[RMDB]
RNA sequence: GGGAACGACUCGAGUAGAGUCGAAAAUCUGUUGAGAUAUGUGAUCGUAAAGUCAGUGUGGGACUAUGGUCACAGCAACAGAAGUCAGAUUGCGAGUAGUCCCACAUACUAGUCUGAGUCUGACACACUUCUCGAGAGUAUUCGUACUUUCGAGAAGAAAAGAAACAACAACAACAAC
Reactivity to 2A3 in 0.01 (KOAc 150mM, MgCl2 10mM, bicine 150mM(pH8.5), 24C), signal-to-noise 9, nucleotides 027 to 126: u010c000u000g010u010u020g070a090g030a140u190a080u280g000u010g010a030u010c020g020u060a070a110a110g180u150c140a040g030u040g010u030g110g000g000a000c020u010a020u060g000g010u010c010a010c010a010g010c000a000a010c000a000g020a080a010g000u000c000a000g020a110u050u210g300c050g030a020g030u030a000g000u030c000c060c000a000c000a000u080a040c020u040a030g170u020c120u140g070a010g020u000c010u010g010a010c010a010c010a010
Reactivity to DMS in 0.01 (KOAc 150mM, MgCl2 10mM, bicine 150mM(pH8.5), 24C), signal-to-noise 9, nucleotides 027 to 126: u000c000u000g010u000u000g000a100g010a190u010a090u000g010u000g000a010u000c000g030u000a040a100a140g010u010c220a110g010u010g020u000g000g000g000a020c020u000a030u000g000g010u000c010a010c010a040g010c010a010a010c010a020g000a040a120g000u000c020a020g000a030u000u000g020c080g000a050g010u000a010g000u000c010c000c010a010c030a030u000a030c080u010a100g010u010c090u010g010a080g000u000c010u000g000a030c010a160c290a150
About this RNA:
Source: RMDB library OK2TRN, as collected in RNAgym. The record gives the reactivity of an RNA of 177 nucleotides to 2A3 and DMS. Values cover nucleotides 27 to 126. For DMS, 82,346 sequencing reads were counted.